[RMDB]
RNA sequence: GGGAACGACUCGAGUAGAGUCGAAAAAGGUUUCCACCAGCACCACAGGAACUAGAAUAUUGGCAAUAAUAGGGUUAAUCUCAUUGAUGUGGUCAGUUCAUCAGGAUAAUUUAAAGUUCAAUGUGAGGAGAUCUAGUGUUUUCGAACACUAGAUCUCAAAAGAAACAACAACAACAAC
Reactivity to DMS in 0.01 (KOAc 150mM, MgCl2 10mM, bicine 150mM(pH8.5), 24C), signal-to-noise 3, nucleotides 027 to 126: a100g020g000u000u000u000c020c010a170c170c100a090g010c140a180c050c000a070c040a060g010g000a050a050c050u040a150g000a070a060u000a100u000u000g000g000c070a060a060u010a030a080u000a110g020g010g010u000u000a040a080u010c050u000c060a100u000u000g010a030u010g030u000g000g010u000c100a100g010u000u000c040a020u000c050a100g010g000a050u000a060a050u010u010u020a110a050a070g010u000u010c030a040a080u000g010u020g020a130g010
Reactivity to 2A3 in 0.01 (KOAc 150mM, MgCl2 10mM, bicine 150mM(pH8.5), 24C), signal-to-noise 3, nucleotides 027 to 126: a000g110g000u040u020u000c030c020a040c040c020a010g020c070a020c020c000a000c010a030g050g010a020a010c040u070a020g100a200a060u130a040u080u110g050g040c050a030a060u130a200a060u040a120g070g000g030u080u120a110a090u010c030u020c050a050u070u160g040a040u060g030u030g110g090u020c020a030g040u050u040c000a020u000c010a030g090g040a060u060a110a060u080u130u120a080a140a050g000u030u020c030a080a140u040g010u060g030a070g160